Chemical mapping of a 177-nucleotide RNA with DMS and 2A3. The 2A3 profile rests on 2,062 reads. The data come from the RNA Mapping Database (RMDB), library OK2TRN. Values cover nucleotides 27 to 126. The DMS profile rests on 2,443 reads. The RNA was probed in 150 mM KOAc, 10 mM MgCl2 and 150 mM bicine (pH 8.5) at 24 C.
[RMDB]
RNA sequence: GGGAACGACUCGAGUAGAGUCGAAAACAUUGCUUUCCAAGGGGCUGUCCUGGCGGGGCACUCAGCCUGACCCCACUGCAGUAUAGCCCAGGGGUCAUGGGAGACCAUGCUUUCUAGGGACGAUGGGCAGUCUCCUUAUGUUCGCAUAAGGAGACUGAAAAGAAACAACAACAACAAC
Reactivity to DMS in 0.01 (KOAc 150mM, MgCl2 10mM, bicine 150mM(pH8.5), 24C), signal-to-noise 3, nucleotides 027 to 126: c100a090u010u010g030c120u010u000u010c000c020a130a150g010g010g000g020c050u010g020u000c030c020u000g030g010c120g020g000g000g020c080a070c070u010c160a090g020c100c090u000g010a130c020c000c000c010a120c120u000g010c070a060g050u000a060u000a120g000c000c090c040a130g020g000g020g010u000c010a030u010g000g010g010a150g000a170c040c020a060u000g020c030u000u000u000c030u020a190g000g000g000a040c070g000a060u010g030g010g000
Reactivity to 2A3 in 0.01 (KOAc 150mM, MgCl2 10mM, bicine 150mM(pH8.5), 24C), signal-to-noise 2, nucleotides 027 to 126: c030a090u110u180g020c070u050u110u070c020c030a110a070g020g000g000g040c040u040g010u000c000c010u030g100g060c040g000g000g030g010c050a020c070u130c050a080g130c010c000u100g130a300c000c000c000c010a010c060u160g000c010a040g120u140a080u140a130g000c000c000c000a000g000g060g000g020u080c030a020u000g030g020g010a060g000a040c000c020a030u070g050c030u200u170u110c060u110a050g020g000g030a010c020g040a070u020g010g050g020